[RMDB]
RNA sequence: GGGAACGACUCGAGUAGAGUCGAAAAACGGGCAGUGGCGAUGGCAACGCGGCAGCCGCAGGGUCGACUUCUUCGCAGCCGCAACAGACGGGGAACGGGCAAAGAGGGGCACUCGUUCUGUUGGAAGCUAGUACCGCUAUUUCGAUAGCGGUACUAGAAAAGAAACAACAACAACAAC
Reactivity to DMS in 0.01 (KOAc 150mM, MgCl2 10mM, bicine 150mM(pH8.5), 24C), signal-to-noise 4, nucleotides 027 to 126: a100c130g000g000g000c040a060g000u010g000g000c060g000a060u020g010g020c030a040a090c140g000c020g010g000c050a080g030c070c040g030c100a100g000g010g030u040c040g000a100c100u020u000c030u000u000c100g000c090a120g000c050c020g030c030a060a040c070a040g010a070c080g000g010g030g020a060a080c120g010g000g010c070a050a040a100g010a110g020g010g020g010c080a090c040u000c020g010u020u000c020u020g030u000u020g010g010a090a070g000
Reactivity to 2A3 in 0.01 (KOAc 150mM, MgCl2 10mM, bicine 150mM(pH8.5), 24C), signal-to-noise 8, nucleotides 027 to 126: a000c050g010g030g020c040a050g030u060g060g020c040g050a080u060g040g010c030a060a040c050g010c010g050g010c010a020g030c020c010g030c050a030g000g020g030u060c030g030a060c010u060u030c000u050u030c060g000c040a030g030c010c020g030c010a020a030c010a010g050a010c010g000g010g010g010a090a060c040g020g050g000c040a060a110a000g050a060g020g010g010g010c030a010c030u010c010g050u120u020c020u020g000u000u010g020g020a040a010g040